RNA sequence: GGGAACGACUCGAGUAGAGUCGAAAAGCAACAUAGAUCGUUCUAUUAACGAACACGCGCGGAUCGUCGGUGGUCGGCGAGCCCACGGACGUACUUGAUCGCGCGAACGUGUAAAAAUCGCCGGCAAGUACGAAUUCAGUUUCGACUGAAUUCGUACAAAAGAAACAACAACAACAAC
Reactivity to DMS in 0.01 (KOAc 150mM, MgCl2 10mM, bicine 150mM(pH8.5), 24C), signal-to-noise 3, nucleotides 027 to 126: g010c100a090a030c070a060u000a100g010a080u020c080g010u010u010c080u000a220u010u000a090a110c090g020a050a050c080a260c010g000c010g010c010g010g010a070u000c010g020u010c030g010g030u000g000g010u000c010g020g010c020g040a020g000c260c010c010a020c000g010g000a010c020g010u010a040c160u010u000g010a100u000c030g000c030g010c000g020a030a030c080g010u010g010u000a010a050a040a030a020u000c000g010c030c000g020g010c190a030a120
Reactivity to 2A3 in 0.01 (KOAc 150mM, MgCl2 10mM, bicine 150mM(pH8.5), 24C), signal-to-noise 3, nucleotides 027 to 126: g060c000a010a100c000a080u130a070g120a120u120c050g010u030u010c030u100a250u210u200a110a050c090g020a040a010c040a010c020g000c000g000c010g060g060a110u080c010g040u000c060g170g010u020g000g010u010c030g000g010c010g010a060g080c000c000c000a000c030g100g000a020c010g020u060a040c020u140u210g080a100u240c010g000c000g000c000g020a020a000c010g010u000g010u030a000a040a020a030a000u000c010g010c020c000g030g010c060a100a070